[RMDB]
RNA sequence: GGGAACGACUCGAGUAGAGUCGAAAAGAUAUGGAAGGCUCAGUUGGGAGAAGCUCGGAAACGAGACUUCAUCGAUCAACUGAGGCCUUCCUAAGUCAAAACAUGCUGGCCUUCGGGCCAGCAUGAACAUCUUAAGCACGUUCGCGUGCUUAAGAUGAAAAGAAACAACAACAACAAC
Reactivity to DMS in 0.01 (KOAc 150mM, MgCl2 10mM, bicine 150mM(pH8.5), 24C), signal-to-noise 3, nucleotides 027 to 126: g000a040u000a300u000g010g000a020a000g000g000c010u000c010a000g010u010u010g000g000g010a040g020a020a010g000c000u000c000g030g010a070a070a220c010g020a010g000a110c020u020u000c020a230u000c140g030a080u020c010a000a010c000u010g010a020g010g010c000c000u000u000c000c010u000a010a100g010u010c040a090a060a130a200c000a010u000g010c000u000g000g000c000c010u000u000c220g030g000g000c010c000a020g000c000a000u000g020a050a190
Reactivity to 2A3 in 0.01 (KOAc 150mM, MgCl2 10mM, bicine 150mM(pH8.5), 24C), signal-to-noise 2, nucleotides 027 to 126: g000a000u070a010u140g020g000a010a000g000g010c000u010c000a010g010u030u010g030g040g000a040g020a030a020g000c000u010c000g030g110a050a060a030c020g010a020g170a300c020u030u020c030a220u300c030g080a120u060c000a010a020c010u010g000a020g010g000c000c000u000u000c010c010u010a010a000g020u010c040a000a020a110a180c000a000u000g010c000u000g010g060c000c030u110u090c300g030g000g010c020c030a020g030c040a000u000g000a000a000